Record summary
Chemical mapping of a 177-nucleotide RNA with 2A3. The reactions ran in a buffer of 150 mM KOAc, 10 mM MgCl2 and 150 mM bicine (pH 8.5), at 24 C. It was measured as part of the RMDB library OK1LIB.
RNA sequence: GGGAACGACUCGAGUAGAGUCGAAAACGCAGCUUAAGGAUAACCGCUCAUUCCAGGGCAUUUAUCGAAAGGCGCUGGCGAGGGCUGCCGGUGAUUUGAUUUACGGGUUGAGCAUGACCCGUGCCUACACCCACGCGAUGUUCGCAUCGCGUGGGUGAAAAGAAACAACAACAACAAC
Reactivity to 2A3 in 0.01 (KOAc 150mM, MgCl2 10mM, bicine 150mM(pH8.5), 24C), signal-to-noise 1, nucleotides 027 to 126: c030g000c000a070g010c020u100u200a070a070g100g030a080u020a100a100c000c000g000c000u000c060a210u090u040c020c000a030g010g020g010c120a030u220u210u130a100u070c100g030a010a000a000g010g000c020g050c010u010g020g000c010g010a110g040g020g000c020u030g000c000c000g000g050u020g140a200u050u100u090g000a110u180u000u060a010c000g020g000g010u040u060g060a030g080c180a180u290g000a020c000c000c000g000u000g020c000c000u030a080